[RMDB]
RNA sequence: GGGAACGACUCGAGUAGAGUCGAAAAGAUAUGGAGUCCAGUAUGGAGCGCUUCGGAAACGAAGCGGCUAUGAAGUACGGACUCCUAAGUCAAAACUGGAGACGUAGCUUCGGCUACGUCUCCAGAACAUUCAUAGACUCUUCGGAGUCUAUGAAUGAAAAGAAACAACAACAACAAC
Reactivity to DMS in 0.01 (KOAc 150mM, MgCl2 10mM, bicine 150mM(pH8.5), 24C), signal-to-noise 3, nucleotides 027 to 126: g000a020u000a300u000g000g010a020g000u000c000c000a120g030u000a000u000g010g000a020g010c010g010c000u000u000c010g010g000a090a080a150c000g010a020a000g000c010g040g030c010u000a090u010g010a110a210g000u010a010c000g000g000a010c000u000c000c000u000a000a060g010u010c020a080a040a120a160c020u000g000g000a000g010a030c020g030u010a000g010c000u000u010c200g030g010c000u000a000c000g010u010c000u000c000c000a000g000a030a140
Reactivity to 2A3 in 0.01 (KOAc 150mM, MgCl2 10mM, bicine 150mM(pH8.5), 24C), signal-to-noise 2, nucleotides 027 to 126: g020a010u060a040u200g000g000a000g000u020c020c070a060g030u030a030u080g140g020a020g020c010g000c000u030u000c000g020g030a060a040a010c010g000a000a020g000c070g020g000c010u090a300u290g080a080a020g000u000a000c010g000g000a000c010u000c000c000u010a000a020g020u000c020a000a010a090a110c000u000g040g000a020g030a010c000g000u010a000g000c000u080u120c300g000g020c000u020a000c000g000u020c000u000c010c000a010g000a000a000